[RMDB]
RNA sequence: GGGAACGACUCGAGUAGAGUCGAAAAGACGGAAUAAAGACCCCAAGUAAUCGAGCGAAGGAGACCAUCUAUGAGUGUGCUCAAUGUGGUAUUGCUUUGUGCAAGGAUCCUUGUUUUCUUCGGUUUAGUAUGGCAUGAUAUUCGUAUCAUGCCAUACAAAAGAAACAACAACAACAAC
Reactivity to DMS in 0.01 (KOAc 150mM, MgCl2 10mM, bicine 150mM(pH8.5), 24C), signal-to-noise 6, nucleotides 027 to 126: g020a090c120g000g010a080a070u010a070a070a090g000a130c050c020c010c060a070a140g000u010a070a060u000c040g010a100g020c090g010a040a040g000g010a060g000a050c020c040a020u000c080u000a120u000g010a030g020u010g030u010g010c010u000c020a060a150u000g010u000g000g010u000a060u010u000g010c020u000u000u000g020u010g000c040a050a080g010g010a110u000c060c030u000u000g010u010u010u000u000c050u000u000c080g010g010u000u000u000a140
Reactivity to 2A3 in 0.01 (KOAc 150mM, MgCl2 10mM, bicine 150mM(pH8.5), 24C), signal-to-noise 4, nucleotides 027 to 126: g060a010c070g030g050a090a030u150a140a120a020g090a050c000c000c000c010a060a000g070u070a100a060u070c050g010a000g060c040g000a010a010g010g020a020g020a030c010c020a010u070c030u090a140u100g010a010g040u140g040u090g100c000u000c040a050a100u150g010u060g030g040u090a150u100u080g020c010u080u060u190g090u090g050c020a040a020g070g020a040u020c010c010u040u040g050u070u100u030u040c030u030u030c020g040g050u010u060u060a020
Overview:
Conditions: 150 mM KOAc, 10 mM MgCl2 and 150 mM bicine (pH 8.5), 24 C. The record gives the reactivity of an RNA of 177 nucleotides to DMS and 2A3. For DMS, 9,017 sequencing reads were counted. Source: RMDB library OK2TST, as collected in RNAgym.